[RMDB]
RNA sequence: GGGAACGACUCGAGUAGAGUCGAAAAGUAGUUAUGCUGAAAAUCGUUGAGGUUGUAUGGAAUAGGUUAACCGUAAGACCUUAAGUUUAAAAACUUUAAAAUUAAUCUCAGGUAAAUUACUUUGAGUAAAACCUUCGUCGUUUCGACGACGAAGGAACGUAAAUAGGUGCUUCGGCACCUAUUUACGAAAAGAAACAACAACAACAAC
Reactivity to 2A3 in 0.01 (KOAc 150mM, MgCl2 10mM, bicine 150mM(pH8.5), 24C), signal-to-noise 1, nucleotides 027 to 156: g000u040a000g070u060u080a100u250g050c040u050g050a030a010a090a010u060c080g070u010u100g010a010g050g010u000u060g040u110a100u110g030g070a110a240u060a140g170g000u150u130a020a040c060c040g000u030a030a020g000a000c000c000u010u010a070a000g010u000u000u140a080a140a020a040a040c000u150u240u160a160a000a120a060u130u070a140a050u080c000u000c030a000g020g050u040a070a160a290u090u040a000c000u100u140u140g020a080g000u060a070a070a110a140c000c020u000u010c000g000u000c000g000u000u050u050c070g040a010c000g000a000c000g000a000a000g000g000a000a000
Chemical mapping of a 207-nucleotide RNA with 2A3. The 2A3 profile rests on 385 reads. It was measured as part of the RMDB library M2RFPK. Reactivities are given for positions 27 through 156.